Chemical mapping of a 177-nucleotide RNA with 2A3 and DMS. Conditions: 150 mM KOAc, 10 mM MgCl2 and 150 mM bicine (pH 8.5), 24 C.
RNA sequence: GGGAACGACUCGAGUAGAGUCGAAAAACUUCGCCAUCGAUAUUUGUUUGACGACCAGAGCUUCGGCGUCUUUCCAGACGCUCACGACGAUCUUUUCCUUCAAAUUCGACCCAAGUCCGCACUGCUUAUUGUUAGUAUAAUUCGUUAUACUAACAAUAAAAGAAACAACAACAACAAC
Reactivity to 2A3 in 0.01 (KOAc 150mM, MgCl2 10mM, bicine 150mM(pH8.5), 24C), signal-to-noise 9, nucleotides 027 to 126: a000c030u080u050c040g040c040c010a070u060c040g060a050u030a100u170u100u100g140u040u050u110g060a040c030g020a040c010c040a040g010a020g080c030u080u070c040g020g000c010g010u000c000u050u090u020c030c020a010g000a020c010g000c020u020c020a040c040g080a020c030g040a050u030c010u010u050u040u030c010c000u020u050c020a060a090a190u080u050c030g030a050c000c000c010a020a010g030u000c020c010g030c020a020c070u090g020c020u040u010
Reactivity to DMS in 0.01 (KOAc 150mM, MgCl2 10mM, bicine 150mM(pH8.5), 24C), signal-to-noise 9, nucleotides 027 to 126: a100c090u010u000c050g010c020c030a070u010c050g000a090u020a060u010u010u010g010u000u010u000g010a110c110g000a070c070c050a070g010a110g020c050u010u010c090g000g010c030g010u000c010u010u030u020c170c160a130g010a050c060g010c030u000c070a080c070g000a080c070g000a040u000c020u000u010u000u010c010c010u000u010c070a050a060a150u020u010c060g000a080c040c010c020a060a070g010u010c010c020g010c150a090c060u010g000c100u000u000
Notes:
Reactivities are rounded to 0.1 and cut off at 0 and 3. For DMS the reverse transcriptase was MarathonRT. DMS (dimethyl sulfate) methylates the pairing face of unpaired adenines and cytosines.